[RMDB]
RNA sequence: GGGAACGACUCGAGUAGAGUCGAAAAGAUAUGGAUCGAACCAGCAAGGAACGUCUCGGAAACGAGACGAAUUCUGAUGACCUGGAUCGAUCCUAAGUCAAAACCGAUCCACUUCGGUGGAUCGGAAGUCUUGUCUUAACUUCGGUUAAGACAAGACAAAAGAAACAACAACAACAAC
Reactivity to 2A3 in 0.01 (KOAc 150mM, MgCl2 10mM, bicine 150mM(pH8.5), 24C), signal-to-noise 2, nucleotides 027 to 126: g000a010u020a000u060g000g000a000u000c010g000a030a050c000c010a000g040c140a180a230g020g000a020a010c010g000u010c010u000c000g000g010a010a030a010c000g010a000g000a000c010g000a000a070u100u000c000u020g180a300u130g050a070c000c020u000g000g000a050u020c000g000a010u030c000c000u010a010a010g000u000c010a000a010a110a130c000c000g020a000u000c000c000a010c010u080u090c300g180g010u010g000g000a000u000c010g000g000a000a010
Reactivity to DMS in 0.01 (KOAc 150mM, MgCl2 10mM, bicine 150mM(pH8.5), 24C), signal-to-noise 2, nucleotides 027 to 126: g020a010u000a080u010g000g010a010u000c000g010a000a090c010c000a000g030c030a040a040g000g010a000a040c010g000u000c000u000c000g010g000a020a010a080c020g020a020g000a030c000g000a070a070u010u000c000u000g000a080u040g000a070c300c010u000g000g000a090u000c000g020a010u000c010c010u000a000a080g000u010c020a140a070a110a280c000c000g000a010u000c000c010a010c020u000u010c290g020g020u000g000g010a010u000c000g010g020a020a030
Chemical mapping of a 177-nucleotide RNA with 2A3 and DMS.
Conditions: 150 mM KOAc, 10 mM MgCl2 and 150 mM bicine (pH 8.5), 24 C.
DMS adducts were read by reverse transcription with MarathonRT.
The DMS profile rests on 2,323 reads.